This 177-nucleotide RNA was probed chemically with 2A3 and DMS. For 2A3, 20,432 sequencing reads were counted.
[RMDB]
RNA sequence: GGGAACGACUCGAGUAGAGUCGAAAAACGAACCAUAAACCAUUCCCCAUGGGGGACCCCGUCCCUAACCCACGGGGCCCGUGGCUAUGGCAGGGCUUGCCGCCCCGACGUUGGCUGCGAGCCCUGGGAUGAAGUGAAAUUUCGAUUUCACUUCAUCAAAAGAAACAACAACAACAAC
Reactivity to 2A3 in 0.01 (KOAc 150mM, MgCl2 10mM, bicine 150mM(pH8.5), 24C), signal-to-noise 6, nucleotides 027 to 126: a000c030g020a040a040c030c010a060u100a060a110a020c020c000a030u040u040c020c030c000c000a040u060g040g000g000g020g070a130c030c060c010c020g020u030c030c010c020u030a060a080c020c010c020a010c010g010g010g000g010c000c000c000g010u010g010g000c020u020a020u040g030g000c010a000g010g000g000c010u010u020g020c010c020g000c000c010c020c040g190a250c080g130u200u120g010g000c000u000g000c000g010a000g010c000c000c000u000g000g010
Reactivity to DMS in 0.01 (KOAc 150mM, MgCl2 10mM, bicine 150mM(pH8.5), 24C), signal-to-noise 9, nucleotides 027 to 126: a130c110g010a100a140c020c010a050u000a030a110a160c020c020a100u000u000c050c090c000c050a120u000g020g010g010g010g010a250c020c010c000c010g010u000c040c050c030u000a120a130c220c120c170a030c010g000g010g010g000c040c020c020g010u000g000g010c100u000a020u000g000g000c000a020g000g000g010c000u000u000g000c040c080g000c000c000c110c120g010a090c250g020u010u010g020g010c000u010g000c000g000a020g000c000c000c000u000g000g010
Notes: It was measured as part of the RMDB library OK2TST. DMS adducts were read by reverse transcription with MarathonRT. For DMS, 13,985 sequencing reads were counted. High DMS reactivity at an A or C suggests that its Watson-Crick edge is free.